An RNA of 177 nucleotides, treated with 2A3 and DMS and read out base by base. DMS adducts were read by reverse transcription with MarathonRT. It was measured as part of the RMDB library OK2TST. The 2A3 profile rests on 15,469 reads.
RNA sequence: GGGAACGACUCGAGUAGAGUCGAAAACUAUCGGUGUCGCUUCCGGGCAGACAGCUGGCUUCCGCGGAGAUGUGGCUGACGUAGGAUUGUUCCCCGUCGAGUGCCUCGACCUCAUUCAGUGCCAGGAGCUUAGAAUUCUAUUCGUAGAAUUCUAAGCAAAAGAAACAACAACAACAAC
Reactivity to 2A3 in 0.01 (KOAc 150mM, MgCl2 10mM, bicine 150mM(pH8.5), 24C), signal-to-noise 7, nucleotides 027 to 126: c010u020a040u120c030g070g000u060g030u080c020g010c040u040u010c020c000g000g050g000c040a050g020a130c020a050g070c040u050g020g010c010u080u030c040c030g040c060g070g020a100g010a080u130g030u040g070g000c030u040g010a030c010g030u080a070g030g070a070u030u190g030u070u040c010c000c000c000g020u020c020g020a070g050u100g050c000c020u010c020g040a060c000c020u020c010a040u180u060c050a020g020u020g100c010c000a030g040g030a020
Reactivity to DMS in 0.01 (KOAc 150mM, MgCl2 10mM, bicine 150mM(pH8.5), 24C), signal-to-noise 8, nucleotides 027 to 126: c030u000a060u010c040g010g010u000g010u000c030g010c050u000u000c020c030g010g010g020c080a080g010a090c120a100g010c040u000g020g000c030u000u000c050c050g010c140g010g010a080g000a070u010g020u000g000g010c020u000g010a050c090g010u000a080g010g000a120u010u000g010u000u000c010c010c030c070g020u000c030g010a080g010u010g010c040c010u000c030g010a070c040c040u000c050a080u010u010c080a070g000u000g000c050c020a080g000g010a180